Structure probing data (DMS and 2A3) for a 177-nucleotide construct.

[RMDB]
RNA sequence: GGGAACGACUCGAGUAGAGUCGAAAAAAGUCCCCUCAAAAGGGACACAUCUAAGGGCUUGAUAGUCUAUGAUGAAUGACACCAAGAGUUGGCUGAUGGCAACAUGAAAGGACACGUGCAAGACCUGCAGGUAGUUUAAGUUCGCUUAAACUACCUGAAAAGAAACAACAACAACAAC
Reactivity to DMS in 0.01 (KOAc 150mM, MgCl2 10mM, bicine 150mM(pH8.5), 24C), signal-to-noise 4, nucleotides 027 to 126: a140a080g010u000c000c010c000c040u000c300a070a080a120a120g010g000g010a020c020a170c080a030u010c030u010a060a190g010g010g000c000u000u000g010a110u010a060g010u010c010u000a300u010g000a040u010g000a110a100u000g010a050c060a100c040c010a060a060g000a060g000u000u000g010g020c040u010g010a090u000g020g000c050a040a090c060a040u000g010a080a060a070g000g000a050c070a050c090g010u010g000c020a070a050g010a080c050c030u010g020
Reactivity to 2A3 in 0.01 (KOAc 150mM, MgCl2 10mM, bicine 150mM(pH8.5), 24C), signal-to-noise 2, nucleotides 027 to 126: a000a000g020u030c060c020c040c000u090c070a270a250a010a000g010g010g000a000c020a000c000a010u000c000u080a070a160g030g000g010c030u140u130g140a070u280a130g010u020c010u040a030u140g020a010u020g080a090a120u120g020a020c010a010c060c030a030a050g050a030g130u080u100g140g000c060u060g040a080u110g050g000c000a030a010c020a100u050g030a090a040a030g020g000a000c030a010c110g050u010g010c010a070a000g000a050c010c010u040g050
Background
It was measured as part of the RMDB library RFMREP. The RNA was probed in 150 mM KOAc, 10 mM MgCl2 and 150 mM bicine (pH 8.5) at 24 C. Values cover nucleotides 27 to 126. For 2A3, 1,827 sequencing reads were counted.